[RMDB]
RNA sequence: GGGAACGACUCGAGUAGAGUCGAAAAAGUUCUGGACCCUGUCUGGGUUGGGGAGGGGCAUUUGGUCCUCAGGCUGAGCCCACCUGGAUUCCCCAGGCCCUUGGUGAGCGCCACUCUGGCUGCAACUCCCCUUGCCUGGCCCGUCCUGAGGCCCCUCGUCUAUGCUUGAAUUCGUUCAAGCAUAGACAAAAGAAACAACAACAACAAC
Reactivity to 2A3 in 0.01 (KOAc 150mM, MgCl2 10mM, bicine 150mM(pH8.5), 24C), signal-to-noise 1, nucleotides 027 to 156: a000g140u160u110c050u070g050g000a010c040c030c090u110g100u120c090u070g020g010g020u020u060g030g020g010g000a030g010g000g000g010c020a010u180u180u160g010g020u090c020c030u060c050a050g050g010c010u010g020a010g020c030c050c000a010c070c010u030g050g060a120u250u190c020c020c020c020a000g020g000c000c050c050u010u100g020g010u000g020a000g030c000g000c020c050a080c150u280c130u200g080g010c060u100g050c030a040a090c010u070c010c000c040c040u020u070g060c000c000u020g020g000c010c010c030g070u060c000c000u000g000a000g010g000c020c020c000c010u030c030

An RNA of 207 nucleotides, treated with 2A3 and read out base by base. The reactions ran in a buffer of 150 mM KOAc, 10 mM MgCl2 and 150 mM bicine (pH 8.5), at 24 C. 2A3 adducts were read by reverse transcription with SuperScript II with manganese.